[RMDB]
RNA sequence: GGGAACGACUCGAGUAGAGUCGAAAAUAUUUACUUAAGUUUUAUUACCUUCCUAUAGGAGUAGGUAGGCUAAAUAUUCAGAACUUUGAUCUUACCCGAAGUUAGUAUCGAAGCAACGGGCUGGAGCAUCGCGUGUAGAAUUCGUUCUACACGCGAUAAAAGAAACAACAACAACAAC
Reactivity to 2A3 in 0.01 (KOAc 150mM, MgCl2 10mM, bicine 150mM(pH8.5), 24C), signal-to-noise 3, nucleotides 027 to 126: u180a030u060u160u070a120c040u050u090a090a050g080u060u010u080u030a100u090u050a010c000c000u010u040c000c000u020a000u080a150g240g110a150g130u020a000g020g000u000a020g030g000c030u060a050a040a070u110a120u080u120c120a060g070a110a020c050u050u050u120g090a070u030c020u010u050a040c010c010c050g000a020a010g000u020u030a060g050u060a120u200c090g040a080a000g020c000a000a060c010g000g000g000c010u020g040g000a020g040c010
Reactivity to DMS in 0.01 (KOAc 150mM, MgCl2 10mM, bicine 150mM(pH8.5), 24C), signal-to-noise 2, nucleotides 027 to 126: u020a040u010u010u010a040c080u000u020a000a080g000u020u000u000u000a000u020u000a080c000c000u000u000c020c010u000a070u010a070g010g000a160g020u000a000g020g020u000a020g010g010c300u000a010a010a050u000a030u000u060c170a100g000a050a100c010u030u000u010g020a050u020c000u000u000a130c000c030c030g000a030a220g000u000u010a070g030u060a060u050c220g010a040a040g050c150a030a190c030g010g000g000c040u010g010g040a020g000c140
This 177-nucleotide RNA was probed chemically with 2A3 and DMS. It was measured as part of the RMDB library OK1LIB. 2A3 is a SHAPE reagent: it acylates the 2'-hydroxyl of flexible nucleotides of all four kinds. The DMS profile rests on 2,881 reads. The reactions ran in a buffer of 150 mM KOAc, 10 mM MgCl2 and 150 mM bicine (pH 8.5), at 24 C. DMS adducts were read by reverse transcription with MarathonRT.